[RMDB]
RNA sequence: GGGAACGACUCGAGUAGAGUCGAAAAGAAAGAAAGAAAGAGAUCAAGUAUCAACAGUGACCAUUGCACUAACACUAGGCCAAAGGCCCUACGCUGCCUGGAAUAUUUAUUUACACCGCUUAUCUAAUGGUUUCUAGAUUAAAACAAUGAUCUUGAAACCUACUAGCCUAUUCGUAGGCUAGUAGGUAAAAGAAACAACAACAACAAC
Reactivity to DMS in 0.01 (KOAc 150mM, MgCl2 10mM, bicine 150mM(pH8.5), 24C), signal-to-noise 2, nucleotides 027 to 156: g000a140a030a080g020a080a060a110g000a150a090a160g000a070g020a040u000c050a070a120g010u010a060u000c050a070a080c070a120g020u000g010a000c040c030a050u000u000g000c040a170c130u000a040a080c070a080c000u000a040g050g000c070c030a040a090a150g010g000c020c040c020u000a040c090g030c040u000g020c020c050u040g010g010a010a070u000a040u000u020u000a030u010u010u000a020c050a160c020c040g000c070u000u000a090u000c040u000a060a130u000g000g010u000u000u000c030u000a110g000a070u030u000a040a050a110a070c070a110a080u000g010a040u000c000u010u000g000a080a100
Reactivity to 2A3 in 0.01 (KOAc 150mM, MgCl2 10mM, bicine 150mM(pH8.5), 24C), signal-to-noise 4, nucleotides 027 to 156: g060a030a050a000g080a020a050a010g060a040a120a030g040a000g000a030u070c040a050a040g060u050a060u100c030a010a060c020a080g000u010g030a010c000c020a050u020u080g010c030a020c090u040a060a010c060a020c120u050a030g000g030c010c010a090a080a100g030g000c020c000c020u060a050c070g040c070u040g000c000c010u000g030g010a020a010u060a080u060u220u010a090u060u120u080a090c070a030c040c070g050c120u110u060a060u130c020u090a030a070u060g020g000u030u020u010c020u020a030g000a120u110u040a050a070a040a040c030a060a110u110g020a010u020c000u020u020g010a100a030
Notes:
Chemical mapping of a 207-nucleotide RNA with DMS and 2A3. The RNA was probed in 150 mM KOAc, 10 mM MgCl2 and 150 mM bicine (pH 8.5) at 24 C. Reactivities are given for positions 27 through 156.